Description
Conditions: 150 mM KOAc, 10 mM MgCl2 and 150 mM bicine (pH 8.5), 24 C. Structure probing data (2A3 and DMS) for a 177-nucleotide construct. It was measured as part of the RMDB library OK2TRN.
RNA sequence: GGGAACGACUCGAGUAGAGUCGAAAAGAGCCGAGGGCCCCUUACUAGUAAGGAACGCGAAGGGCAAAGAGAACGCGAACCCGAGGCCCAACUCUAAGCCCAAGGGCAGCGGGAAGGCCAGCGGCAAUCACCUAGUUUAGUUCGCUAAACUAGGUGAAAAAGAAACAACAACAACAAC
Reactivity to 2A3 in 0.01 (KOAc 150mM, MgCl2 10mM, bicine 150mM(pH8.5), 24C), signal-to-noise 2, nucleotides 027 to 126: g040a020g010c000c000g000a030g030g000g000c030c050c000c000u020u020a040c040u060a070g200u050a050a020g010g000a110a070c020g000c010g040a060a040g030g010g020c050a030a030a010g030a000g010a140a040c030g010c020g020a060a070c000c010c000g000a010g050g000c000c000c000a010a020c000u010c000u030a020a050g000c000c000c030a060a120g010g000g000c020a020g030c030g000g000g020a120a050g030g000c000c000a010g020c000g000g010c010a000a050
Reactivity to DMS in 0.01 (KOAc 150mM, MgCl2 10mM, bicine 150mM(pH8.5), 24C), signal-to-noise 4, nucleotides 027 to 126: g020a210g020c000c000g000a060g000g000g000c010c010c010c010u000u000a020c090u010a180g000u010a020a030g000g020a130a300c040g010c010g030a130a210g010g000g000c040a070a200a090g000a050g030a120a190c040g010c010g010a130a140c010c000c000g010a040g000g000c000c000c000a080a100c020u010c050u000a100a230g000c000c000c010a090a150g010g020g000c000a010g030c030g000g000g010a190a100g000g010c000c000a010g020c010g000g000c020a100a080
Values cover nucleotides 27 to 126.